Notes: Conditions: 150 mM KOAc, 10 mM MgCl2 and 150 mM bicine (pH 8.5), 24 C. This 207-nucleotide RNA was probed chemically with 2A3 and DMS. For 2A3, 5,521 sequencing reads were counted. It was measured as part of the RMDB library M2RFPK. For DMS, 4,097 sequencing reads were counted. Reactivities are given for positions 27 through 156. 2A3 adducts were read by reverse transcription with SuperScript II with manganese. For DMS the reverse transcriptase was MarathonRT.

RNA sequence: GGGAACGACUCGAGUAGAGUCGAAAAGAAGGGUGAAAGCCCUUGAUACUGUAGUGGAAAUUAUAACUAAGAAGAGUUCUGAGUUGCUUAAGCAGAACUAAAAUAAAAAGACAAGCAUUAUUACAAACAUGGCGAGGUAAGUUCGCUUACCUCGCAACUAUAAGCAUAUGUUCGCAUAUGCUUAUAGAAAAGAAACAACAACAACAAC
Reactivity to 2A3 in 0.01 (KOAc 150mM, MgCl2 10mM, bicine 150mM(pH8.5), 24C), signal-to-noise 6, nucleotides 027 to 156: g070a000a000g010g000g000u040g030a070a020a040g010c010c000c000u000u000g030a050u060a070c050u070g060u120a040g040u040g050g070a060a030a050u160u110a080u120a210a050c060u050a000a100g060a060a030g050a050g050u000u010c010u010g020a030g030u070u060g050c010u060u020a060a010g010c000a000g000a010a000c030u080a010a010a010a030u120a010a070a010a000a000g020a010c030a020a000g010c000a000u020u080a060u120u140a190c090a060a110a010c050a090u090g080g000c000g000a000g010g000u000a000a010g000u020u080c140g000c110u000u000a000c000c000u000c000g000c000a000a000
Reactivity to DMS in 0.01 (KOAc 150mM, MgCl2 10mM, bicine 150mM(pH8.5), 24C), signal-to-noise 2, nucleotides 027 to 156: g000a070a020g000g070g020u000g000a130a100a270g010c000c000c000u000u020g000a160u000a110c050u000g040u010a050g020u000g030g000a090a060a130u030u000a080u010a080a180c040u000a040a130g000a100a160g000a140g000u000u000c030u000g010a070g010u010u000g020c080u000u000a070a120g000c020a070g010a050a030c020u000a010a020a070a060u000a030a070a120a120a110g010a060c050a060a120g000c030a020u000u000a070u000u010a080c120a040a030a070c040a090u000g010g000c040g000a010g000g030u000a000a020g000u000u020c260g000c010u000u000a010c010c000u000c000g000c000a000a010